[RMDB]
RNA sequence: GGGAACGACUCGAGUAGAGUCGAAAACAUGCCGGACACGGUGAGGCUGGUGCAGUGGCCGGUGAUCACCACCGUGUUGGACAUGCCGCUGACGCUGACAAUGCUGUCGUUGCAGGCGAUUGUCCGGGCUUCAGGUUAUCUUCGGAUAACCUGAAGCAAAAGAAACAACAACAACAAC
Reactivity to DMS in 0.01 (KOAc 150mM, MgCl2 10mM, bicine 150mM(pH8.5), 24C), signal-to-noise 2, nucleotides 027 to 126: c020a130u020g010c040c020g030g010a020c000a060c070g000g010u030g020a230g000g000c020u000g000g030u000g010c120a100g000u000g010g000c000c000g010g000u020g000a110u040c270a280c110c030a000c000c020g000u000g030u010u000g000g000a040c020a020u060g000c020c010g030c030u000g000a030c080g000c030u010g010a040c100a050a030u020g010c110u030g040u000c030g000u010u000g060c050a210g030g010c020g000a170u000u030g010u000c000c010g000g000
Reactivity to 2A3 in 0.01 (KOAc 150mM, MgCl2 10mM, bicine 150mM(pH8.5), 24C), signal-to-noise 4, nucleotides 027 to 126: c030a010u110g040c000c010g040g010a010c000a010c020g000g010u000g030a070g080g000c020u030g000g040u150g040c110a170g030u170g180g000c010c020g000g010u080g040a060u140c090a060c100c000a020c000c000g000u020g030u040u080g020g000a020c000a010u030g040c010c020g010c050u070g020a030c020g010c070u040g040a050c100a030a180u270g040c110u140g020u060c010g300u300u130g000c100a100g050g000c010g010a070u110u070g000u020c000c010g010g020